RNA sequence: GGGAACGACUCGAGUAGAGUCGAAAAACGCUUCACAAUGUGCGGCAAAGAAACAUUGUUUAUGCAAAGGCACUUCGCAAUGUGUGCUCAAACAUUGCUUAUUCAAACACGCUUCACUAUGUGCGACAAAACUUCACGGUCUUCGGACCGUGAAGAACCUAUUCGGACUGUUCGCAGUCCGAAUAGGAAAAGAAACAACAACAACAAC
Reactivity to DMS in 0.01 (KOAc 150mM, MgCl2 10mM, bicine 150mM(pH8.5), 24C), signal-to-noise 1, nucleotides 027 to 156: a010c000g040c010u000u000c050a030c020a060a040u010g070u000g000c000g010g020c020a100a130a090g010a070a000a040c000a010u000u000g020u010u010u010a100u040g000c080a100a170a100g020g010c000a010c060u010u010c100g000c140a180a090u010g010u000g050u010g020c020u000c060a130a130a060c000a030u000u000g000c020u010u000a060u000u000c060a060a120a060c110a010c010g000c090u010u000c080a110c130u000a100u010g030u000g000c020g020a150c080a030a030a170a100c000u000u000c010a030c000g020g000u000c020u000u000c270g060g020a010c030c000g000u000g020a000a010g010a020a030
Reactivity to 2A3 in 0.01 (KOAc 150mM, MgCl2 10mM, bicine 150mM(pH8.5), 24C), signal-to-noise 7, nucleotides 027 to 156: a000c000g010c000u010u000c010a000c000a000a000u010g010u000g000c020g050g030c110a140a100a030g110a010a060a000c010a010u010u000g120u080u100u140a100u130g060c070a070a060a080g200g000c000a000c010u030u030c020g000c030a010a010u010g010u000g040u010g030c070u110c200a070a050a000c010a010u000u000g000c000u060u110a160u130u150c110a030a090a030c060a020c090g030c020u120u120c050a040c100u100a080u240g040u060g030c020g060a040c070a020a100a040a020c000u000u000c000a000c000g000g000u000c000u020u050c070g100g000a000c000c010g000u000g000a000a000g000a000a000
The record gives the reactivity of an RNA of 207 nucleotides to DMS and 2A3. The RNA was probed in 150 mM KOAc, 10 mM MgCl2 and 150 mM bicine (pH 8.5) at 24 C. For 2A3 the reverse transcriptase was SuperScript II with manganese. For DMS the reverse transcriptase was MarathonRT.